[RMDB]
RNA sequence: GGGAACGACUCGAGUAGAGUCGAAAAUGCGUUUUCACUUGGAUGCGCCCCACUCUGAGAGAGGCAUGUCCGGCAUGGUGCAUGCAAGCACGCACAUUCCUUUGUCUGGGGCUUUGGGCUGUAGCCCUGUCCACCUCUUAUUCGUAAGAGGUGGACAAAAAGAAACAACAACAACAAC
Reactivity to 2A3 in 0.01 (KOAc 150mM, MgCl2 10mM, bicine 150mM(pH8.5), 24C), signal-to-noise 2, nucleotides 027 to 126: u000g000c000g000u000u010u000u100c030a060c030u010u030g050g000a010u010g040c020g020c010c000c000c000a010c020u000c010u030g050a050g010a020g000a010g040g000c010a040u020g050u020c020c040g130g110c250a180u300g060g000u110g020c000a000u020g040c000a000a020g030c040a010c030g040c020a010c000a080u010u060c000c000u070u150u210g300u090c140u050g020g010g020g060c000u000u110u040g020g000g010c000u050g120u260a020g010c000c000c020
Reactivity to DMS in 0.01 (KOAc 150mM, MgCl2 10mM, bicine 150mM(pH8.5), 24C), signal-to-noise 3, nucleotides 027 to 126: u000g010c010g020u000u000u000u000c050a120c010u000u000g000g010a010u000g000c040g040c010c000c060c010a120c130u000c010u000g000a030g020a070g020a030g010g010c030a020u000g010u000c030c020g030g030c180a070u000g000g010u020g000c010a020u010g000c010a110a140g040c180a010c020g000c020a010c070a250u000u000c010c010u000u000u000g010u000c160u020g000g010g000g000c010u000u000u010g000g000g000c010u010g030u010a160g020c000c000c010